[RMDB]
RNA sequence: GGGAACGACUCGAGUAGAGUCGAAAAACUUUUUGAUUCGUCAAAAAGUAACUACCGAGAAUGCGACUCGGUAUACGCAAAUAACCCUUGGAAACAAGGGAUCAAACUAACGUUUCGACGUUAGUAAUACAUCCUACAGGUUCGCCUGUAGGAUGUAAAAAGAAACAACAACAACAAC
Reactivity to 2A3 in 0.01 (KOAc 150mM, MgCl2 10mM, bicine 150mM(pH8.5), 24C), signal-to-noise 2, nucleotides 027 to 126: a000c010u010u050u010u000u010g030a010u020u040c060g050u030c070a040a000a000a000a000g000u010a030a070c050u010a010c000c000g010a000g020a120a100u240g140c120g110a090c020u000c000g020g010u000a030u010a000c050g000c040a070a050a050u130a140a130c000c010c000u000u000g010g020a030a040a020c000a010a000g010g000g000a000u020c010a000a080a010c000u010a000a010c000g030u010u070u090c190g060a020c000g010u000u000a000g020u010a000a010
Reactivity to DMS in 0.01 (KOAc 150mM, MgCl2 10mM, bicine 150mM(pH8.5), 24C), signal-to-noise 3, nucleotides 027 to 126: a020c010u000u000u000u000u000g000a020u000u010c140g020u000c010a000a000a000a010a010g010u010a080a090c120u000a020c000c000g010a010g000a120a120u000g010c230g000a060c000u000c010g000g020u000a020u020a080c200g000c140a050a060a100u030a080a140c000c000c000u000u020g000g000a190a090a190c010a010a010g020g000g020a040u010c170a040a090a050c000u000a000a000c010g000u010u000u000c140g010a030c000g010u000u000a010g000u000a020a080

Description:
This 177-nucleotide RNA was probed chemically with 2A3 and DMS. For 2A3 the reverse transcriptase was SuperScript II with manganese. The 2A3 profile rests on 2,376 reads. The reactions ran in a buffer of 150 mM KOAc, 10 mM MgCl2 and 150 mM bicine (pH 8.5), at 24 C.